[RMDB]
RNA sequence: GGGAACGACUCGAGUAGAGUCGAAAACCGUACCUUCGGGUACGGAAAGGUGAGGUGUCCGAGUGGCUGAAGGAGCACGCCUGGAAAGUGUGUAUACGGCAACGUAUCGGGGGUUCGUAUCCCCCCCUCACCGCCAAAAGUGAACUUUCGAGUUCACACGCUAUAGUAUAUUCGUAUACUAUAGCGUAAAAGAAACAACAACAACAAC
Reactivity to 2A3 in 0.01 (KOAc 150mM, MgCl2 10mM, bicine 150mM(pH8.5), 24C), signal-to-noise 9, nucleotides 027 to 156: c000c000g000u000a000c000c000u030u080c280g120g000g000u010a010c010g000g010a100a040a010g000g000u010g000a000g000g030u110g010u100c020c020g020a080g080u220g170g030c140u140g060a100a040g020g010a010g000c000a000c010g010c000c020u040g050g190a210a040a030g020u020g000u000g010u010a010u000a020c020g010g000c070a110a040c050g010u010a010u020c010g000g010g000g000g010u030u060c050g020u110a180u130c000c000c000c000c000c000c000u000c000a000c000c000g000c000c000a030a040a010a010g000u000g000a000a000c020u060u140u160c260g030a030g010u000u000c000a000c000
Reactivity to DMS in 0.01 (KOAc 150mM, MgCl2 10mM, bicine 150mM(pH8.5), 24C), signal-to-noise 4, nucleotides 027 to 156: c010c000g010u000a000c000c000u000u000c300g060g030g020u010a010c010g020g000a010a030a040g000g010u000g010a030g010g020u000g000u010c110c060g010a140g020u000g010g020c020u010g030a140a190g020g000a250g020c010a010c020g010c010c000u000g030g000a050a100a080g010u000g000u000g020u000a100u000a080c020g020g010c120a060a100c020g020u000a060u000c050g010g000g030g050g010u000u010c190g030u000a150u000c000c000c000c000c000c000c000u000c000a010c020c010g000c030c010a020a060a070a110g000u000g000a020a010c000u000u000u000c210g010a070g030u000u000c000a010c000
Description:
The data come from the RNA Mapping Database (RMDB), library PDB130. Chemical mapping of a 207-nucleotide RNA with 2A3 and DMS. 2A3 adducts were read by reverse transcription with SuperScript II with manganese. DMS (dimethyl sulfate) methylates the pairing face of unpaired adenines and cytosines. Values cover nucleotides 27 to 156.